[RMDB]
RNA sequence: GGGAACGACUCGAGUAGAGUCGAAAAAGCCUGGUCGUACGCGACCAGGCAAUGUGUUUCACUCCUUUUACAUGUAUUGUAAACCUUCACACUAAUGUGAAGGAGCCGGCGAUUACGAUCGCCGGCACUCACGCAAGUCUUUCGAGACUUGCGUGAGAAAAGAAACAACAACAACAAC
Reactivity to 2A3 in 0.01 (KOAc 150mM, MgCl2 10mM, bicine 150mM(pH8.5), 24C), signal-to-noise 1, nucleotides 027 to 126: a000g020c000c000u000g110g010u010c010g000u030a090c300g020c040g080a000c000c000a000g030g000c020a000a000u000g000u000g000u090u000u000c150a100c110u100c000c050u010u110u170u000a020c030a070u190g110u300a210u050u050g040u130a030a050a020c000c000u000u000c000a070c070a110c190u190a130a300u300g000u000g000a000a000g000g000a000g000c030c000g010g020c000g040a000u080u000a130c190g080a050u020c010g110c000c000g000g030c000a000